[RMDB]
RNA sequence: GGGAACGACUCGAGUAGAGUCGAAAAACGCAGGAGUCACUACGGUGGCUCCUGCGACUCCUAGCGAAGUCCCGCUAGGAAGAAAAAAUAAGGGCCGAGUCAUCAGUGCUUACGAGCACUGAUGACAAAAACGAGAAUGACUUCGGUCAUUCUCGAACAUAGAAUUAGCGUUCGCGCUAAUUCUAUGAAAAGAAACAACAACAACAAC
Reactivity to 2A3 in 0.01 (KOAc 150mM, MgCl2 10mM, bicine 150mM(pH8.5), 24C), signal-to-noise 1, nucleotides 027 to 156: a000c010g010c000a000g010g010a000g010u000c010a000c000u050a040c200g110g000u030g000g000c000u000c000c000u000g000c000g000a000c000u000c000c000u000a000g000c030g040a070a000g110u010c020c000c010g000c000u010a010g130g010a050a070g030a020a050a010a010a000a010u230a050a080g020g010g010c070c090g070a020g010u000c000a000u000c010a000g000u000g010c000u070u060a040c150g060a040g000c000a010c000u020g000a000u010g000a000c000a000a000a000a000a000c000g000a000g000a000a000u000g000a000c020u030u090c300g060g000u000c000a000u000u000c000u000c000g000a030a010